[RMDB]
RNA sequence: GGGAACGACUCGAGUAGAGUCGAAAAGCCAUGAGUUUCGACUCAUGGCAAAAGCGGGUCAGCGCUACGAUGCAAGCGCAAGCGCGUCCAUCGUAAAUGACAAAAUUCUCGGGUUCGCCCGAGAAAAUGACAUUACCUGAUUCGUCAGGUAAUGUCAAAAAGAAACAACAACAACAAC
Reactivity to 2A3 in 0.01 (KOAc 150mM, MgCl2 10mM, bicine 150mM(pH8.5), 24C), signal-to-noise 4, nucleotides 027 to 126: g000c000c000a000u000g000a000g010u100u050u180c170g040a020c000u000c010a000u010g010g000c010a000a020a000a020g010c010g020g040g010u030c010a030g250c090g000c070u010a000c000g020a010u020g010c090a070a100g010c010g000c060a100a070g210c100g000c000g070u040c020c000a010u020c000g020u010a030a050a070u030g010a020c000a010a100a020a110u050u010c010u000c000g040g000g020u050u050c230g120c020c000c000g000a000g000a010a000a000a000
Reactivity to DMS in 0.01 (KOAc 150mM, MgCl2 10mM, bicine 150mM(pH8.5), 24C), signal-to-noise 3, nucleotides 027 to 126: g000c000c000a000u010g010a020g010u000u000u010c120g020a020c010u010c000a000u000g000g010c000a020a010a060a120g010c040g020g010g000u010c020a030g010c030g020c030u000a010c010g000a010u000g010c120a160a170g010c000g020c090a100a110g000c150g000c120g000u000c240c000a020u000c010g010u000a100a090a090u000g000a020c020a090a040a070a150u010u000c010u000c000g000g000g010u000u000c230g000c000c000c000g000a000g000a000a010a020a070